[RMDB]
RNA sequence: GGGAACGACUCGAGUAGAGUCGAAAACUGUGAAUCUGCCCAUAAUGUCCUGAAAUUCCAAAUGGGUCCUUUUCUCUUCCUCUCAUUUACUAUUUCUAUUCAAAACUGGAAUAUGUGGACAUGUGUACAGCCUUUUAAGACCAAAGGCUUUACGUUACGCUAAAUUUAUAUUCGUAUAAAUUUAGCGAAAAGAAACAACAACAACAAC
Reactivity to DMS in 0.01 (KOAc 150mM, MgCl2 10mM, bicine 150mM(pH8.5), 24C), signal-to-noise 1, nucleotides 027 to 156: c100u020g040u010g010a100a130u000c060u000g000c010c010c020a120u000a100a080u000g010u010c010c030u030g010a130a110a060u000u000c020c030a030a080a060u010g000g010g020u000c010c010u000u000u030u000c060u010c040u000u000c000c040u010c020u020c020a060u000u010u010a060c050u000a070u010u000u000c000u000a120u010u000c100a050a080a130a140c160u000g010g000a060a030u000a060u010g030u000g010g000a050c010a010u000g010u000g010u000a080c050a050g040c000c000u000u000u010u010a030a240g000a180c140c130a050a020a040g000g040c000u000u000u010a040c030g000u010u010a150
Reactivity to 2A3 in 0.01 (KOAc 150mM, MgCl2 10mM, bicine 150mM(pH8.5), 24C), signal-to-noise 4, nucleotides 027 to 156: c050u050g020u070g090a050a080u050c050u110g040c030c010c000a040u140a140a040u030g010u030c010c010u020g100a190a130a150u050u040c030c000a020a080a150u060g020g030g060u150c020c050u160u140u150u090c120u040c000u140u060c030c010u050c020u030c050a050u070u140u120a140c060u090a140u130u120u080c040u090a150u080u150c080a090a070a140a140c080u050g000g030a020a000u040a060u210g040u070g010g010a000c010a040u070g020u010g000u050a010c010a010g000c000c000u000u020u030u120a170a050g060a080c060c040a020a000a010g010g030c000u000u010u000a020c020g010u060u070a020

Structure probing data (DMS and 2A3) for a 207-nucleotide construct.
It was measured as part of the RMDB library OK3TST.
The reactions ran in a buffer of 150 mM KOAc, 10 mM MgCl2 and 150 mM bicine (pH 8.5), at 24 C.
Values cover nucleotides 27 to 156.